[RMDB]
RNA sequence: GGGAACGACUCGAGUAGAGUCGAAAAGAAUAGACAUGAUAGUAAUAGACUAUCUUCAACUUAUGGCUGGAAGUAGAUCAAGUGAAAGUAGACAGCAGGAAGUAUCUGAAAUAUCCAGAUCUAUUAAAGCUUUAGCAAAGGAAAUGGAAUGUCCUGAUCCUUUUAAUCGAUUCGUCGAUUAAAAGGAAAAAGAAACAACAACAACAAC
Reactivity to 2A3 in 0.01 (KOAc 150mM, MgCl2 10mM, bicine 150mM(pH8.5), 24C), signal-to-noise 2, nucleotides 027 to 156: g040a010a060u140a050g050a000c070a090u070g020a000u000a020g010u080a150a160u080a270g070a030c000u000a000u020c000u040u030c050a110a080c040u130u130a070u180g030g000c010u020g000g000a080a010g010u060a000g010a050u010c050a130a030g020u080g110a070a050a000g020u080a020g060a040c050a040g040c010a010g020g050a060a020g010u060a040u060c010u010g050a030a050a080u120a030u030c010c000a000g010a020u000c020u020a030u060u070a050a050a000g000c010u070u100u140a040g010c060a090a070a000g040g010a040a060a030u100g060g030a050a040u150g050u100c020c000u000g050a040
Reactivity to DMS in 0.01 (KOAc 150mM, MgCl2 10mM, bicine 150mM(pH8.5), 24C), signal-to-noise 2, nucleotides 027 to 156: g020a190a090u020a120g010a100c060a060u010g010a080u000a050g000u010a200a150u000a190g010a160c000u000a040u000c010u000u000c030a090a070c040u000u000a090u010g010g000c060u020g020g000a110a120g000u000a030g030a100u000c030a090a130g030u020g010a040a100a170g050u010a070g020a050c070a040g000c070a100g000g010a120a220g050u010a020u000c010u020g000a060a080a090u000a130u000c020c020a070g000a060u000c010u000a060u020u010a150a150a090g010c010u000u000u000a060g050c030a030a090a080g010g000a040a050a100u020g000g010a120a210u000g010u000c000c000u000g000a220